[RMDB]
RNA sequence: GGGAACGACUCGAGUAGAGUCGAAAAAGAAAGUGUUUCCAGAAAGAGGGAGUGAUUAAUUUGUCAAAUAAGAAGAGAGUUGUAAAUUGAUUCUUGGGUUUGGGAAUGUGAUGGUCUCUGGUGGCCCCACCAAGAUUUGUUUCCAUGGGAGGAGGGGCGUGUAACAAUAUUUCGAUAUUGUUACACGAAAAGAAACAACAACAACAAC
Reactivity to 2A3 in 0.01 (KOAc 150mM, MgCl2 10mM, bicine 150mM(pH8.5), 24C), signal-to-noise 4, nucleotides 027 to 156: a000g090a020a040a010g030u020g000u030u050u010c020c010a020g100a050a100a010g050a040g010g030g010a040g030u050g020a070u080u140a080a080u130u150u100g040u040c030a050a060a080u120a130a030g060a080a000g030a000g020a010g040u050u040g040u100a070a080a120u080u060g030a040u060u040c030u030u040g060g020g050u080u150u110g040g010g010a060a070u060g040u070g060a060u100g030g030u020c020u000c050u080g060g000u020g010g070c020c010c000c000a010c020c020a020a010g010a030u040u050u130g020u010u030u010c040c030a040u060g030g000g000a070g000g030a050g000g020g010g000
Reactivity to DMS in 0.01 (KOAc 150mM, MgCl2 10mM, bicine 150mM(pH8.5), 24C), signal-to-noise 1, nucleotides 027 to 156: a100g020a060a060a080g020u000g030u000u010u000c060c030a220g010a100a090a120g000a090g000g010g000a120g030u000g000a060u030u010a020a090u000u020u000g000u000c040a060a110a080u000a080a080g020a080a090g010a080g010a100g040u000u000g010u000a020a060a140u000u000g010a090u010u000c020u000u000g000g010g020u000u000u000g030g020g010a080a060u010g010u000g020a130u000g010g000u010c030u000c010u000g030g010u000g000g000c010c040c020c070a050c010c030a050a110g000a140u010u000u010g010u000u000u000c000c060a180u000g000g020g000a130g010g010a110g020g010g000g000